[RMDB]
RNA sequence: GGGAACGACUCGAGUAGAGUCGAAAAGACACCACCUCGUAAACACGUUCUUUAAUGACACGCUGACUUCCGCAAAGAGAGCAGUGCACGAGUUCGGCGUUGGUAUUGAAAAUGACACUCUUUUCCUGGCGGUCUCUAUAAUAGAACAUGGAGUUCAGUCCCGUCCUGAAUUCGUUCAGGACGGGACAAAAGAAACAACAACAACAAC
Reactivity to 2A3 in 0.01 (KOAc 150mM, MgCl2 10mM, bicine 150mM(pH8.5), 24C), signal-to-noise 1, nucleotides 027 to 156: g030a000c000a030c060c000a050c010c000u000c060g100u070a030a160a000c030a010c130g010u000u000c090u000u120u100a190a140u080g000a000c000a000c070g070c010u030g070a110c010u090u010c110c050g060c090a070a090a000g140a010g030a000g060c100a020g030u000g050c040a070c060g030a060g000u070u030c030g030g000c050g000u040u070g010g010u170a160u120u160g080a000a000a110a110u110g100a030c040a000c050u060c040u040u060u060u170c000c030u130g060g000c100g030g010u000c010u000c000u010a060u030a300a130u160a090g000a050a000c000a060u150g200g000a200g000u130u080c000a030